[RMDB]
RNA sequence: GGGAACGACUCGAGUAGAGUCGAAAAAAUUACUCCAUGCUGAUUCUACAGUUUUUCCACAGUUGUCAGUGUUCUAGUUCUGAGUAUAGUCUCUUGGCAUAAUGUGGUUCAUAAACGACUGCACUGAUAACUUUUGUUAGAACUCACCACUUGCCAGGAAGCGUAUUCUAUUCGUAGAAUACGCUUCAAAAGAAACAACAACAACAAC
Reactivity to DMS in 0.01 (KOAc 150mM, MgCl2 10mM, bicine 150mM(pH8.5), 24C), signal-to-noise 1, nucleotides 027 to 156: a010a010u010u010a080c030u000c040c060a120u000g020c140u000g010a130u000u000c010u010a040c020a120g020u000u000u000u000u000c020c070a120c200a080g000u000u000g010u000c010a030g010u000g010u010u000c060u000a090g030u000u010c040u000g020a100g020u000a060u000a120g010u010c010u000c020u000u010g010g040c010a050u000a070a040u000g020u020g020g010u000u010c050a080u000a090a090a120c090g010a050c100u020g010c030a050c030u020g010a060u000a030a030c020u000u010u000u000g010u010u000a090g000a050a060c050u000c020a020c050c030a040c040u000u000g050c010c020a110g030
Reactivity to 2A3 in 0.01 (KOAc 150mM, MgCl2 10mM, bicine 150mM(pH8.5), 24C), signal-to-noise 2, nucleotides 027 to 156: a000a000u150u040a100c060u070c020c000a030u100g060c040u060g030a090u120u040c000u060a050c000a060g040u030u010u030u100u060c070c050a070c020a010g000u060u010g010u000c020a020g000u000g020u150u100c120u220a050g050u060u070c050u080g060a050g040u170a110u130a300g100u080c020u000c000u110u040g000g010c020a020u020a140a080u300g010u000g030g020u010u090c050a060u130a170a150a020c140g100a120c060u070g010c020a000c020u000g040a040u040a060a020c000u000u100u110u130g040u010u020a030g010a070a010c010u020c090a010c030c000a000c000u010u020g000c030c000a010g040